Chemical mapping of a 177-nucleotide RNA with 2A3 and DMS. For DMS the reverse transcriptase was MarathonRT. The 2A3 profile rests on 4,087 reads. For DMS, 1,386 sequencing reads were counted. Conditions: 150 mM KOAc, 10 mM MgCl2 and 150 mM bicine (pH 8.5), 24 C.
RNA sequence: GGGAACGACUCGAGUAGAGUCGAAAAGAUAUGGACGAUACUUCUCGCCAGGAUCCCUCGGAAACGAGAACUCCUGGAACUACGAGGUUGUAUCGUCCUAAGUCAAAUCCGAUGUUCGCAUCGGAAACGUCCUUACACUGUUCGCAGUGUAAGGACGAAAAGAAACAACAACAACAAC
Reactivity to 2A3 in 0.01 (KOAc 150mM, MgCl2 10mM, bicine 150mM(pH8.5), 24C), signal-to-noise 1, nucleotides 027 to 126: g030a030u090a030u140g020g000a010c010g000a010u000a010c000u030u050c000u000c000g030c000c000a000g000g000a070u080c020c020c000u000c000g000g000a100a060a030c000g000a000g040a090a030c010u020c000c000u000g010g020a020a020c010u160a020c020g010a020g110g080u130u060g000u020a000u010c000g000u010c000c000u000a000a010g000u000c010a000a090a090u000c010c000g000a000u020g030u100u130c300g000c110a000u000c000g000g000a020a020a070
Reactivity to DMS in 0.01 (KOAc 150mM, MgCl2 10mM, bicine 150mM(pH8.5), 24C), signal-to-noise 2, nucleotides 027 to 126: g000a030u000a300u000g000g000a000c010g010a010u000a000c000u000u020c000u000c060g000c010c000a000g000g000a000u000c060c050c010u000c000g000g000a130a130a200c000g000a030g000a160a040c090u000c000c000u000g000g000a070a060c070u050a300c020g000a000g000g010u000u010g000u000a000u000c000g040u000c000c000u000a020a070g000u000c030a050a090a180u000c010c000g000a060u010g000u000u010c200g040c030a020u000c010g000g000a000a050a140